The record gives the reactivity of an RNA of 177 nucleotides to 2A3 and DMS. For DMS the reverse transcriptase was MarathonRT.
[RMDB]
RNA sequence: GGGAACGACUCGAGUAGAGUCGAAAAAUAGGUGCCUGGUGCUAUGACUCCCAGGACCUCAAGUAUGGUGAGGACAGAGUGUCAUGUGAGGCUGUGUCAGAUCAGUCUGUGUCCUGGGACCACCAGAGCUCAAGGUAGUUUUCGAACUACCUUGAGCAAAAGAAACAACAACAACAAC
Reactivity to 2A3 in 0.01 (KOAc 150mM, MgCl2 10mM, bicine 150mM(pH8.5), 24C), signal-to-noise 2, nucleotides 027 to 126: a000u200a060g090g000u040g090c020c000u000g010g000u030g050c100u160a070u300g040a100c060u020c000c000c000a000g000g000a010c010c040u050c030a080a110g040u100a080u080g070g060u050g070a130g090g000a020c000a010g120a020g040u120g070u110c080a080u260g200u280g190a010g050g000c010u030g000u010g030u240c010a020g030a130u030c000a000g120u030c010u030g040u010g000u020c000c000u000g000g020g010a000c010c000a000c000c000a010g010a000
Reactivity to DMS in 0.01 (KOAc 150mM, MgCl2 10mM, bicine 150mM(pH8.5), 24C), signal-to-noise 3, nucleotides 027 to 126: a060u040a060g020g000u020g030c030c000u000g010g010u000g000c230u030a070u030g010a120c170u000c010c010c000a000g010g030a060c010c160u020c110a090a090g000u030a100u010g000g000u020g000a200g010g000a010c000a020g000a040g050u000g010u010c040a190u030g020u040g020a030g010g000c000u000g000u000g010u010c040a030g030a090u000c000a040g010u010c000u020g000u000g020u000c000c000u000g000g010g000a010c140c000a000c010c020a020g000a160
Values cover nucleotides 27 to 126. For DMS, 5,218 sequencing reads were counted. The RNA was probed in 150 mM KOAc, 10 mM MgCl2 and 150 mM bicine (pH 8.5) at 24 C. For 2A3, 4,004 sequencing reads were counted.